[RMDB]
RNA sequence: GGGAACGACUCGAGUAGAGUCGAAAAGAAAUUACGUUUCCUUUACACUUCUCAAACCGGGAUCAAGAGAAUCAAAGCAUCCCUCAUAUCCACGAUGGAGGGUGUCGUGGAGUAUACUGUACCAAAAAGAGCGAACACGGCUUCGGCCGUGUUCGAACGACGUGGGAUAGUUCGCUAUCCCACGUCGAAAAGAAACAACAACAACAAC
Reactivity to 2A3 in 0.01 (KOAc 150mM, MgCl2 10mM, bicine 150mM(pH8.5), 24C), signal-to-noise 1, nucleotides 027 to 156: g070a000a030a050u110u100a030c040g020u040u020u020c040c000u030u070u040a080c080a050c050u130u020c000u050c060a020a100a120c040c020g000g000g000a020u020c010a290a050g070a030g060a110a040u140c070a070a070a090g050c090a040u010c000c080c000u060c050a040u090a060u090c000c020a020c000g040a040u010g090g020a070g010g010g010u100g000u020c000g000u000g010g040a040g000u000a030u000a030c050u070g140u240a110c060c080a000a000a000a160a000g130a010g050c020g010a000a000c020a000c000g000g020c000u050u050c160g020g000c000c000g050u000g000u000u000c000g000a000a000
Overview
Chemical mapping of a 207-nucleotide RNA with 2A3. It was measured as part of the RMDB library M2RFPK. Conditions: 150 mM KOAc, 10 mM MgCl2 and 150 mM bicine (pH 8.5), 24 C. For 2A3, 529 sequencing reads were counted.